[RMDB]
RNA sequence: GGGAACGACUCGAGUAGAGUCGAAAAAUGCGAUACACAGGCGUCGCAGCGCAAAUUUACUUUAGCAACAGCCAAAUUUGUGUGCAUUCCGGCUGUAUUUUGAAUUUUGGCUAUCCUUACCGGACAAGUAUAUCCACCGUGGACGGCUCUGGACGGGCCUGGUCACUUUUUUCGAAAAGUGACCAGGAAAAGAAACAACAACAACAAC
Reactivity to 2A3 in 0.01 (KOAc 150mM, MgCl2 10mM, bicine 150mM(pH8.5), 24C), signal-to-noise 2, nucleotides 027 to 156: a000u060g010c000g040a010u020a070c070a020c020a100g130g000c060g040u030c090g000c020a020g010c030g000c010a030a060a090u010u110u070a160c030u130u210u180a090g010c020a060a210c060a060g040c010c080a070a060a090u020u020u070g040u020g030u030g070c030a050u010u020c050c000g060g000c040u020g100u140a130u070u190u120u110g110a130a060u090u040u090u200g060g000c010u050a060u110c030c000u070u040a060c000c030g000g010a030c060a090a040g130u080a110u010a020u290c030c030a000c040c060g070u030g060g010a010c090g000g030c050u040c090u080g030g010a030c030g010g020g100